[RMDB]
Source information
This 177-nucleotide RNA was probed chemically with 2A3 and DMS. DMS adducts were read by reverse transcription with MarathonRT. Reactivities are rounded to 0.1 and cut off at 0 and 3. Source: RMDB library M2PK50, as collected in RNAgym.
RNA sequence: GGGAACGACUCGAGUAGAGUCGAAAAUUCGCGUGAUUCGUCACGCGAAGAUUACCGAGAACCGUGGUCGGUAUAAACAUGGAACCCUUGGAAACAAGGGAAAUAGGCAGGCCUUCGGGCCUGCCAAGUCAUCAUUAAGCUUCGGCUUAAUGAUGACAAAAGAAACAACAACAACAAC
Reactivity to 2A3 in 0.01 (KOAc 150mM, MgCl2 10mM, bicine 150mM(pH8.5), 24C), signal-to-noise 1, nucleotides 027 to 126: u010u000c000g000c000g020u050g030a030u030u050c090g050u010c110a000c010g000c010g000a000a000g000a000u000u040a050c020c040g000a020g030a150a040c000c050g040u090g030g100u080c040g040g050u050a090u150a090a090a000c040a080u110g160g000a060a070c000c000c000u010u040g010g010a000a070a040c010a020a000g000g010g020a010a050a000u040a010g000g000c000a000g000g000c000c000u060u110c200g050g000g000c000c000u000g010c010c000a000a020
Reactivity to DMS in 0.01 (KOAc 150mM, MgCl2 10mM, bicine 150mM(pH8.5), 24C), signal-to-noise 1, nucleotides 027 to 126: u020u000c000g020c000g040u010g010a010u000u010c190g000u010c000a000c020g000c000g010a000a000g010a170u000u000a140c010c000g000a050g000a130a210c020c030g000u010g020g010u010c000g000g000u000a090u010a020a150a100c220a090u010g010g000a170a170c000c020c000u010u010g000g000a200a080a210c020a000a000g000g010g010a000a070a060u010a100g020g000c000a010g000g000c000c010u000u010c200g040g040g060c000c000u000g000c010c000a000a040